The data come from the RNA Mapping Database (RMDB), library RNAMAK. The record gives the reactivity of an RNA of 207 nucleotides to DMS and 2A3.
RNA sequence: GGGAACGACUCGAGUAGAGUCGAAAAAUCGCAUUCGUGCGAUGCGUAUCCUAAGUCGUCGAUAAGACGCAGAGCUUCGAAGAACAUAUCGGAAACGAUAUGGGAGAAGCGAUCGUCUUUUGACGACGAUAUGGAGUUUUGCCCUGUUCGCAGGGAAUCACGUUUUGUCAUUCGUGACAAAACGUGAAAAAGAAACAACAACAACAAC
Reactivity to DMS in 0.01 (KOAc 150mM, MgCl2 10mM, bicine 150mM(pH8.5), 24C), signal-to-noise 1, nucleotides 027 to 156: a050u020c000g040c020a010u000u000c180g060u000g050c140g000a010u000g010c110g040u000a130u000c000c040u000a110a260g000u000c000g000u000c010g010a080u010a040a020g000a040c000g020c060a110g000a300g020c030u010u010c030g010a230a110g000a190a120c010a010u000a010u000c030g010g000a150a110a300c000g000a040u000a040u030g000g000g010a300g010a030a050g030c000g000a150u020c000g000u000c000u020u020u000u030g000a110c010g020a030c000g000a060u000a050u000g000g020a060g000u000u000u000u000g040c000c020c000u000g000u000u010c290g030c040a020g000g020g040a040a210
Reactivity to 2A3 in 0.01 (KOAc 150mM, MgCl2 10mM, bicine 150mM(pH8.5), 24C), signal-to-noise 1, nucleotides 027 to 156: a000u000c000g000c000a010u030u070c260g080u140g160c150g030a000u020g000c050g000u140a150u000c000c000u030a050a030g010u000c000g010u000c010g020a010u030a290a020g020a000c010g010c170a040g020a020g100c000u010u020c030g230a300a040g020a040a020c000a000u000a000u000c000g000g090a110a050a060c010g010a000u000a000u000g000g000g010a000g010a000a000g000c020g000a030u000c000g000u000c000u000u030u000u040g030a020c020g010a000c000g000a000u000a050u130g060g030a060g040u030u000u050u220g060c000c010c050u000g040u070u110c260g000c160a010g000g000g000a010a040
The RNA was probed in 150 mM KOAc, 10 mM MgCl2 and 150 mM bicine (pH 8.5) at 24 C. Values are in units of 0.01, from 0 to 300, in steps of 10.